[RMDB]
Conditions: 150 mM KOAc, 10 mM MgCl2 and 150 mM bicine (pH 8.5), 24 C.
The record gives the reactivity of an RNA of 177 nucleotides to DMS and 2A3.
DMS adducts were read by reverse transcription with MarathonRT.
2A3 adducts were read by reverse transcription with SuperScript II with manganese.
For 2A3, 1,761 sequencing reads were counted.
Values are in units of 0.01, from 0 to 300, in steps of 10.
As a SHAPE reagent, 2A3 marks flexible, mostly unpaired nucleotides at the ribose 2'-OH.
For DMS, 2,875 sequencing reads were counted.
In probing experiments dimethyl sulfate is read out at A N1 and C N3, which are open when not base-paired.
RNA sequence: GGGAACGACUCGAGUAGAGUCGAAAAUCAACGAGCCAUUACACUGGUUUUAAUGGAGGCUAGGCAUUGGCCUUCAUUCCAAGAAAAUUUCACUCAGACCAAUGUUUGCCCAAUUUGCCAGAAUAUAGAUAUCUAGGACUUUCGAGUCCUAGAUAUCAAAAGAAACAACAACAACAAC
Reactivity to DMS in 0.01 (KOAc 150mM, MgCl2 10mM, bicine 150mM(pH8.5), 24C), signal-to-noise 3, nucleotides 027 to 126: u010c100a110a110c120g010a080g010c010c040a030u000u010a070c070a140c080u000g010g010u000u000u000u000a030a030u000g000g010a020g010g000c000u000a060g010g010c070a040u010u000g000g000c000c010u010u000c030a030u010u000c100c110a070a130g010a050a090a070a100u000u000u010c100a090c120u000c020a060g000a040c030c020a030a060u010g000u000u000u010g010c020c000c030a100a080u010u000u000g000c010c020a100g000a100a120u010a130u010a110
Reactivity to 2A3 in 0.01 (KOAc 150mM, MgCl2 10mM, bicine 150mM(pH8.5), 24C), signal-to-noise 2, nucleotides 027 to 126: u130c000a000a040c060g040a020g030c010c000a020u070u110a040c080a030c120u020g000g060u000u080u110u220a020a020u030g020g020a000g000g020c010u040a040g070g000c110a070u060u070g030g000c000c000u000u030c020a000u000u000c010c020a070a010g100a040a170a020a050u090u130u130c110a060c050u090c020a030g020a070c000c000a050a000u070g000u080u080u060g060c010c010c020a030a060u000u050u060g000c010c010a050g130a170a030u200a040u080a150